[RMDB]
RNA sequence: GGGAACGACUCGAGUAGAGUCGAAAACGGCAGGGCCGCACCAUCUGGUUCCAGGGGGAUCCUGGACCCUUGGCGCCCAAAGGGGGCAAGUCCCGCAAGAAGAAAUCCAAGGGAGCACAGCGGGGUCGCUGUGUACCAUGUUCGCAUGGUACACAGCAAAAGAAACAACAACAACAAC
Reactivity to DMS in 0.01 (KOAc 150mM, MgCl2 10mM, bicine 150mM(pH8.5), 24C), signal-to-noise 3, nucleotides 027 to 126: c120g020g000c060a110g020g010g030c070c060g000c080a080c020c030a030u010c100u010g010g000u000u000c000c000a010g000g000g010g000g010a100u020c010c000u000g000g000a040c020c010c030u010u000g000g010c130g020c030c020c050a030a090a200g020g020g000g000g010c140a130a130g010u000c000c000c020g030c080a090a080g020a160a150g010a060a110a050u000c040c030a090a110g000g000g000a090g010c070a070c110a090g000c030g000g010g010g030u030c110
Reactivity to 2A3 in 0.01 (KOAc 150mM, MgCl2 10mM, bicine 150mM(pH8.5), 24C), signal-to-noise 2, nucleotides 027 to 126: c010g050g000c060a100g040g060g030c080c010g040c030a040c020c010a050u080c080u090g060g050u080u010c000c010a010g020g000g010g050g050a060u240c020c000u020g010g010a020c000c010c000u010u040g010g010c040g030c020c000c000a080a090a040g120g010g000g020g000c050a070a010g050u030c020c000c020g010c020a040a020g150a050a000g020a050a110a010u010c050c030a070a050g090g030g000a060g020c030a020c020a080g000c020g020g000g000g070u050c050
The record gives the reactivity of an RNA of 177 nucleotides to DMS and 2A3. The DMS profile rests on 2,208 reads. The data come from the RNA Mapping Database (RMDB), library OK2TRN. The RNA was probed in 150 mM KOAc, 10 mM MgCl2 and 150 mM bicine (pH 8.5) at 24 C. DMS adducts were read by reverse transcription with MarathonRT. Reactivities are given for positions 27 through 126.